The data come from the RNA Mapping Database (RMDB), library OK3TST. Chemical mapping of a 207-nucleotide RNA with 2A3. 2A3 adducts were read by reverse transcription with SuperScript II with manganese. Reactivities are given for positions 27 through 156. The reactions ran in a buffer of 150 mM KOAc, 10 mM MgCl2 and 150 mM bicine (pH 8.5), at 24 C.
[RMDB]
RNA sequence: GGGAACGACUCGAGUAGAGUCGAAAACUGCAGUGAGCUAUGAUCACGCCACUGCACUCCAGUUUGGGCGACAGAGAGAGACCUUGUCUCAAAAAUUUAAAAAAAGCAAAUGCAUGGGCCACAUUCAGUGCAGAGUCCACUGCCCUGCCAAGGUGCAGUGCUGCCUGACGUUCGCGUCAGGCAGCACAAAAGAAACAACAACAACAAC
Reactivity to 2A3 in 0.01 (KOAc 150mM, MgCl2 10mM, bicine 150mM(pH8.5), 24C), signal-to-noise 1, nucleotides 027 to 156: c030u000g040c000a000g010u010g030a130g050c090u120a130u270g110a200u230c030a030c160g010c040c000a000c000u010g000c000a010c000u000c000c000a020g030u020u080u080g010g030g030c010g050a080c110a010g040a020g010a000g000a000g040a070c040c070u110u120g060u000c030u000c020a090a000a000a000a000u160u240u230a110a170a010a000a000a010a020g010c010a030a010a000u200g000c050a010u020g010g050g050c000c070a050c030a010u110u080c050a040g010u000g060c030a010g040a000g180u020c000c020a040c000u020g000c000c020c010u000g000c000c010a060a040g110g030u130g080c030a000